[RMDB]
RNA sequence: GGGAACGACUCGAGUAGAGUCGAAAAAGGGCCUCGAACGACUCAAACCUGGACUUCUGCGAUUGUCGCUUCCUUUUCCUGCCUCUGAGCUCGGGAGGGGUUUCCCGCCUCGCAGCCCCCGCCCCUGAGGCGAGGUAUCAUUCGUGAUACCUCGCCUAAAAGAAACAACAACAACAAC
Reactivity to DMS in 0.01 (KOAc 150mM, MgCl2 10mM, bicine 150mM(pH8.5), 24C), signal-to-noise 1, nucleotides 027 to 126: a070g040g000g020c000c040u000c010g000a220a170c080g040a160c050u000c000a050a110a120c050c020u020g000g000a100c010u000u050c010u000g050c020g010a040u040u000g020u010c030g020c140u000u010c040c000u000u000u000u030c050c000u030g040c000c000u020c050u000g010a090g000c010u010c100g040g000g030a260g020g020g030g000u000u040u000c000c000c000g000c040c000u000c080g030c070a130g020c170c000c000c000c000g000c010c000c000c070u000g000
Reactivity to 2A3 in 0.01 (KOAc 150mM, MgCl2 10mM, bicine 150mM(pH8.5), 24C), signal-to-noise 2, nucleotides 027 to 126: a000g090g050g010c000c000u040c020g030a080a030c040g050a030c020u040c060a010a100a190c000c010u040g080g020a050c050u070u040c020u070g020c040g120a130u070u110g050u040c020g010c090u030u030c020c000u020u000u050u040c000c010u040g020c020c000u030c050u100g000a010g030c030u010c020g020g010g000a030g000g000g000g000u010u060u020c010c000c010g010c000c000u020c000g050c020a020g000c000c000c000c000c010g010c010c010c000c010u030g050